[RMDB]
RNA sequence: GGGAACGACUCGAGUAGAGUCGAAAAGGGGUGCUAGGACCGUGGGGGGACCAGCGGAGCCAUGGGAUGCCCUUCCCGAUUCCGUCCAUCCCUUCCCCCUGAGGGUCGCCCAGGAAUGGCGGGACCCGUGUUAACUCAUCUUCGGAUGAGUUAACACAAAAGAAACAACAACAACAAC
Reactivity to DMS in 0.01 (KOAc 150mM, MgCl2 10mM, bicine 150mM(pH8.5), 24C), signal-to-noise 2, nucleotides 027 to 126: g010g020g000g010u000g000c050u000a180g000g000a100c300c020g020u000g030g020g000g020g010g050a100c050c050a030g010c050g020g000a090g000c040c080a120u000g030g000g010a120u010g000c010c030c020u000u010c010c040c000g000a040u000u000c000c010g010u020c300c050a010u000c010c000c000u000u000c020c010c000c110c020u000g020a090g000g010g000u010c000g000c020c000c030a000g010g010a220a130u000g000g020c130g030g010g000a020c010c010c060
Reactivity to 2A3 in 0.01 (KOAc 150mM, MgCl2 10mM, bicine 150mM(pH8.5), 24C), signal-to-noise 3, nucleotides 027 to 126: g000g010g000g010u020g020c050u130a040g030g000a010c000c030g030u080g000g020g000g010g010g000a010c030c010a000g040c060g160g140a070g060c080c050a100u050g000g020g060a100u270g090c000c000c010u060u080c020c000c000g010a070u140u050c000c020g030u030c030c000a020u030c010c000c000u010u070c020c000c000c010c020u090g040a100g020g020g020u000c020g230c060c010c030a030g060g000a220a130u100g040g030c090g040g040g010a020c010c000c000
About this RNA
The record gives the reactivity of an RNA of 177 nucleotides to DMS and 2A3. The reactions ran in a buffer of 150 mM KOAc, 10 mM MgCl2 and 150 mM bicine (pH 8.5), at 24 C. The DMS profile rests on 1,856 reads. High 2A3 reactivity points to a flexible backbone, as in loops and unpaired stretches. The 2A3 profile rests on 2,860 reads.